[RMDB]
An RNA of 170 nucleotides, treated with DMS and 2A3 and read out base by base. DMS adducts were read by reverse transcription with MarathonRT. The reactions ran in a buffer of 150 mM KOAc, 10 mM MgCl2 and 150 mM bicine (pH 8.5), at 24 C. For DMS, 4,009 sequencing reads were counted.
RNA sequence: GGGAACGACUCGAGUAGAGUCGAAAAACCCGGCGAAUGCCCCCACAUAGCAGAGUCCGGGACCCCCUCCUAAAAGACCGAGGGGGGGUGCUUGGAGCACGGGGGUCCCAGUGGAUCCGUGGGAUGCUAACGUGGCGCUUCGGCGCCACGAAAAGAAACAACAACAACAAC
Reactivity to DMS in 0.01 (KOAc 150mM, MgCl2 10mM, bicine 150mM(pH8.5), 24C), signal-to-noise 3, nucleotides 027 to 129: a090c060c000c010g020g020c090g060a130a050u060g030c120c060c040c000c050a120c140a180u060a080g080c070a070g060a200g050u000c000c050g060g000g000a050c000c000c000c060c000u010c010c000u070a060a090a050a090g040a090c210c160g030a080g000g000g000g000g000g000g000u010g030c000u030u020g040g000a080g010c030a070c040g000g000g000g000g000u020c010c010c020a030g060u010g020g000a020u000c020c060g050u050g000g060g000a090u030g080c060u070a090a200
Reactivity to 2A3 in 0.01 (KOAc 150mM, MgCl2 10mM, bicine 150mM(pH8.5), 24C), signal-to-noise 1, nucleotides 027 to 129: a000c000c000c020g020g000c020g060a170a060u170g010c000c000c030c040c000a000c000a050u130a030g000c010a100g010a010g160u050c000c000g000g000g000a010c000c000c000c000c000u040c010c000u220a250a190a000a000g040a040c040c080g000a250g000g000g000g080g000g010g000u070g060c000u000u040g070g020a040g030c010a000c030g000g000g000g000g000u000c000c000c000a020g010u200g050g040a050u010c000c050g040u000g000g010g010a000u030g000c000u000a000a040